[RMDB]
RNA sequence: GGGAACGACUCGAGUAGAGUCGAAAAGAGAACAAAUCGAAAGGGAUCUGGAGACGCGAAAGAAACCGGAGGACGCUUUCCUUACAUCGUGUCUUGCAGACUCAGGGAGACGCGUCCGGAGAUAGCGGUCAUUAUCGCCUUUCGAGGCGAUAAUGACAAAAGAAACAACAACAACAAC
Reactivity to 2A3 in 0.01 (KOAc 150mM, MgCl2 10mM, bicine 150mM(pH8.5), 24C), signal-to-noise 3, nucleotides 027 to 126: g050a010g020a050a000c060a050a090a030u110c020g100a080a070a020g000g030g060a040u000c010u100g000g000a040g020a040c010g080c030g040a110a130a060g110a010a060a000c060c040g040g010a050g060g040a060c010g010c080u000u020u000c000c000u100u110a140c080a220u210c130g020u030g000u070c000u010u100g150c050a030g000a010c000u020c020a000g000g000g000a040g000a000c150g030c040g010u040c010c040g000g000a040g030a000u100a000g070c130g010
Reactivity to DMS in 0.01 (KOAc 150mM, MgCl2 10mM, bicine 150mM(pH8.5), 24C), signal-to-noise 2, nucleotides 027 to 126: g000a070g000a020a110c070a050a120a080u000c070g000a060a140a070g000g000g030a100u000c070u000g000g030a150g020a030c070g000c010g040a090a110a140g000a000a110a170c070c060g000g040a140g030g000a110c050g000c000u000u000u000c000c000u000u020a260c300a190u030c180g030u000g000u020c000u030u060g030c100a260g010a040c000u000c060a040g020g000g000a060g000a010c190g030c070g000u000c050c000g000g030a170g020a110u010a090g010c080g000
Chemical mapping of a 177-nucleotide RNA with 2A3 and DMS. Conditions: 150 mM KOAc, 10 mM MgCl2 and 150 mM bicine (pH 8.5), 24 C. The data come from the RNA Mapping Database (RMDB), library OK1LIB. Reactivities are given for positions 27 through 126.